[RMDB]
RNA sequence: GGGAACGACUCGAGUAGAGUCGAAAAGAUAUGGAGACCAUCAUUACAGAGCUUGACUUAUCGGAAACGAUAAGGAGCGACGAAGUAAUGAGUGGUCUCCUAAGUCAAACGAGUGUUCGCACUCGAACAGCUGUCAAUAGUUCGCUAUUGACAGCUGAAAAGAAACAACAACAACAAC
Reactivity to 2A3 in 0.01 (KOAc 150mM, MgCl2 10mM, bicine 150mM(pH8.5), 24C), signal-to-noise 2, nucleotides 027 to 126: g030a030u050a030u180g010g030a020g000a010c000c000a010u050c010a010u000u010a010c020a030g080a000g030c020u060u100g300a300c000u000u000a000u020c000g040g000a120a080a030c020g010a000u000a010a020g010g000a000g000c020g280a300c060g080a120a030g000u010a000a000u010g030a030g150u040g000g010u000c010u000c010c000u000a010a000g000u040c030a020a000a110c020g000a020g010u020g010u130u150c240g030c150a000c000u010c030g010a080a020
Reactivity to DMS in 0.01 (KOAc 150mM, MgCl2 10mM, bicine 150mM(pH8.5), 24C), signal-to-noise 3, nucleotides 027 to 126: g030a030u000a300u040g000g000a020g010a030c010c000a120u000c000a000u020u010a000c000a070g020a290g000c010u000u000g030a300c030u000u000a000u000c000g000g000a100a180a230c010g000a010u000a010a000g000g000a050g000c000g010a180c200g010a160a130g000u000a010a010u000g010a050g050u000g010g010u000c000u000c000c000u000a020a040g000u000c000a060a090a190c020g000a050g010u010g000u000u010c200g000c000a020c000u000c000g010a110a250
This 177-nucleotide RNA was probed chemically with 2A3 and DMS. Reactivities are rounded to 0.1 and cut off at 0 and 3. The 2A3 profile rests on 4,229 reads. Reactivities are given for positions 27 through 126. For DMS the reverse transcriptase was MarathonRT.